[RMDB]
RNA sequence: GGGAACGACUCGAGUAGAGUCGAAAAGGGCAGAUUCUGCCAGGACGAUGUGGACGAGUGCGCCCAACGGGAUCAUCCGGUGUGCCAGAACGGAGCCACCUGUACAAACACUCACGGAUCGUACAGCCCUCCAUAGAGCGUUCGCGCUCUAUGGAGGAAAAGAAACAACAACAACAAC
Reactivity to 2A3 in 0.01 (KOAc 150mM, MgCl2 10mM, bicine 150mM(pH8.5), 24C), signal-to-noise 2, nucleotides 027 to 126: g050g000g000c050a000g080a300u300u050c020u020g040c000c050a030g060g000a010c040g000a030u040g060u080g300g040a080c090g030a040g040u060g010c040g060c030c000c000a020a040c000g000g000g050a110u070c060a070u040c070c020g010g030u080g050u120g080c020c010a040g040a170a040c040g000g070a000g040c010c010a030c000c000u050g000u050a030c030a050a100a020c000a000c030u020c000a030c010g000g030a000u010c020g000u010a010c030a060g000c000
Reactivity to DMS in 0.01 (KOAc 150mM, MgCl2 10mM, bicine 150mM(pH8.5), 24C), signal-to-noise 2, nucleotides 027 to 126: g020g000g020c050a030g020a190u000u050c010u010g040c040c000a150g020g000a090c030g030a050u010g020u000g000g020a140c120g020a050g000u000g010c070g020c100c020c070a100a070c090g000g000g010a070u010c170a140u000c050c020g010g000u000g020u010g000c020c060a110g020a020a110c040g040g000a110g000c080c130a040c010c010u000g030u000a020c120a080a110a150c060a020c020u000c060a050c060g000g000a010u000c100g010u000a130c090a190g000c090
Annotation: Chemical mapping of a 177-nucleotide RNA with 2A3 and DMS. The reactions ran in a buffer of 150 mM KOAc, 10 mM MgCl2 and 150 mM bicine (pH 8.5), at 24 C. For 2A3, 1,611 sequencing reads were counted.